Structure probing data (DMS) for a 177-nucleotide construct. Conditions: 150 mM KOAc, 10 mM MgCl2 and 150 mM bicine (pH 8.5), 24 C.

RNA sequence: GGGAACGACUCGAGUAGAGUCGAAAAAAAAGAUAUGGAUUCUGAACUACGCUUAAGCAAGUCAUCGAUCUAUAGUCGGAAACGACUAUAGGGAGACUUGGCCACAGCGCAGAAUCCUAAGUCAAAACGUUUUUAAGAUGUUCGCAUCUUAAAAACGAAAAGAAACAACAACAACAAC
Reactivity to DMS in 0.01 (KOAc 150mM, MgCl2 10mM, bicine 150mM(pH8.5), 24C), signal-to-noise 2, nucleotides 027 to 126: a190a090a040a070g010a060u010a300u020g000g000a040u000u000c010u000g010a080a080c160u010a300c060g010c020u000u000a300a290g000c000a030a000g000u000c000a300u010c300g000a070u000c010u000a000u000a020g010u000c000g010g000a010a030a090c000g020a040c010u000a000u030a000g000g000g010a040g000a010c000u000u000g000g000c030c060a070c300a000g010c010g000c000a000g000a000a000u000c000c000u000a030a080g040u000c000a060a100a110a180